[RMDB]
RNA sequence: GGGAACGACUCGAGUAGAGUCGAAAACUGAUUUGCGCGGCGGGAAAACAGCCUGCGGCAGCGUUUGCCGGGCAAAUUAGCGAACUGGAAAACGCCGGGCAGACGGUGGUUCUGGUGCUGCGUAACGGCUCAUAAAUCGGUUCGCCGAUUUAUGAGCAAAAGAAACAACAACAACAAC
Reactivity to 2A3 in 0.01 (KOAc 150mM, MgCl2 10mM, bicine 150mM(pH8.5), 24C), signal-to-noise 3, nucleotides 027 to 126: c040u040g050a160u080u020u090g010c130g010c010g010g000c010g030g090g050a020a090a060a050c030a040g020c000c000u040g030c030g070g010c040a030g060c010g040u080u110u050g000c000c000g000g020g000c010a040a070a140u090u020a040g060c020g020a020a030c040u110g040g050a060a100a040a030c030g000c000c000g000g020g000c010a020g040a060c010g060g060u040g010g130u070u020c030u060g080g040u060g010c030u020g010c010g020u030a030a040c070g060
Reactivity to DMS in 0.01 (KOAc 150mM, MgCl2 10mM, bicine 150mM(pH8.5), 24C), signal-to-noise 1, nucleotides 027 to 126: c090u010g010a070u000u000u000g000c000g080c020g050g000c040g000g000g030a070a020a100a050c160a100g040c110c000u000g000c010g010g010c040a170g000c130g000u000u000u040g000c000c050g000g000g040c030a020a020a120u010u010a040g030c030g000a050a020c030u000g000g000a100a050a050a120c090g010c000c000g000g030g020c040a010g000a020c000g000g000u000g000g000u040u000c000u000g000g000u100g030c050u000g000c050g000u000a060a000c270g020
Overview
Source: RMDB library OK1LIB, as collected in RNAgym. This 177-nucleotide RNA was probed chemically with 2A3 and DMS. The reactions ran in a buffer of 150 mM KOAc, 10 mM MgCl2 and 150 mM bicine (pH 8.5), at 24 C. The 2A3 profile rests on 2,556 reads.